[RMDB]
RNA sequence: GGGAACGACUCGAGUAGAGUCGAAAAAGCAACACAAUAUCGAUAUCAGGUAACCAAGAAAAUGGCAGUUGAGUUUGUGCCGUCUGAUGAUCAAACAGGGUAAGGGCUUUAAAUAUGGUGCUGUCAGCGUAUCGAAAGGAUUCGUCCUUUCGAUACGAAAAGAAACAACAACAACAAC
Reactivity to DMS in 0.01 (KOAc 150mM, MgCl2 10mM, bicine 150mM(pH8.5), 24C), signal-to-noise 8, nucleotides 027 to 126: a060g010c040a050a040c050a060c110a080a090u000a070u010c070g000a070u000a060u000c050a060g010g010u000a090a120c070c050a050a090g010a060a050a090a080u000g020g010c030a040g010u000u010g010a080g010u010u000u000g020u000g000c030c030g000u010c020u000g010a060u000g000a060u000c100a050a050a070c110a070g000g020g010u000a070a080g010g010g010c040u000u000u000a030a050a090u000a080u010g010g000u000g000c030u010g020u000c050a080g010
Reactivity to 2A3 in 0.01 (KOAc 150mM, MgCl2 10mM, bicine 150mM(pH8.5), 24C), signal-to-noise 5, nucleotides 027 to 126: a000g050c050a070a010c020a010c040a110a090u060a040u190c050g020a020u030a020u130c020a020g080g000u060a070a040c030c010a100a000g080a110a090a000a010u060g020g000c020a020g020u100u090g070a050g050u050u150u150g060u040g020c020c010g000u010c020u030g060a090u050g010a020u080c060a040a060a050c020a030g030g000g040u060a040a050g040g020g020c000u110u080u090a030a070a000u190a090u100g050g000u040g030c020u010g030u050c020a020g010